[RMDB]
RNA sequence: GGGAACGACUCGAGUAGAGUCGAAAACGCGCUCAGGCUUUCGAUACGGCAAUCGAGCUCUUGCCGUCAGCUAACCGGCCCACGAGGGGGCGGGAAUCGUUACGAGCUUGCGCACUGAGCGGACUCCGGGAUCUUGCUUGUUCGCAAGCAAGAUCCCAAAAGAAACAACAACAACAAC
Reactivity to 2A3 in 0.01 (KOAc 150mM, MgCl2 10mM, bicine 150mM(pH8.5), 24C), signal-to-noise 2, nucleotides 027 to 126: c090g020c000g000c000u000c000a030g000g000c020u220u230u130c050g030a100u060a090c000g050g040c050a070a000u070c090g070a050g070c010u000c000u060u000g020c000c020g000u000c070a000g000c000u070a010a010c000c000g210g100c000c000c010a180c040g130a300g010g090g000g000g100c010g000g000g030a010a010u080c070g070u040u080a120c110g000a000g060c060u150u160g020c020g070c090a120c000u080g000a040g000c000g070g000a070c070u000c030c000